[RMDB]
RNA sequence: GGGAACGACUCGAGUAGAGUCGAAAAGAUAUGGACCCGCAGAUACGCUUGUAGCGAUGUCCAAAACAUAUUCGGAAACGAAUAUGUUUUGGAUUUCGCGCAGAUAAGCGAGUAGGGUCCUAAGUCACCUAACUUUAUUCUUCGGAAUAAAGUUAGGAAAAGAAACAACAACAACAAC
Reactivity to 2A3 in 0.01 (KOAc 150mM, MgCl2 10mM, bicine 150mM(pH8.5), 24C), signal-to-noise 4, nucleotides 027 to 126: g040a020u080a070u170g010g000a010c000c030c010g090c300a020g020a110u100a090c010g010c030u040u030g080u140a120g000c000g010a010u010g020u000c000c010a000a000a000a000c010a000u010a000u000u010c010g040g040a090a120a100c010g000a000a010u010a000u000g000u010u010u000u000g000g000a010u000u000u000c010g000c000g010c000a000g020a130u240a090a040g000c010g000a000g030u120a150g000g000g000u010c000c000u010a000a000g030u020c020a040
Reactivity to DMS in 0.01 (KOAc 150mM, MgCl2 10mM, bicine 150mM(pH8.5), 24C), signal-to-noise 7, nucleotides 027 to 126: g010a060u000a300u000g000g010a020c000c000c000g010c180a200g010a080u000a040c000g010c000u000u010g020u000a180g030c000g010a000u000g010u000c000c000a010a000a000a010c000a000u000a000u000u000c000g000g000a170a120a250c000g010a020a010u000a000u000g010u000u000u000u000g010g000a000u010u000u000c010g010c010g010c180a100g000a080u000a020a000g010c000g010a080g010u000a050g020g010g000u000c000c000u000a010a070g010u000c060a220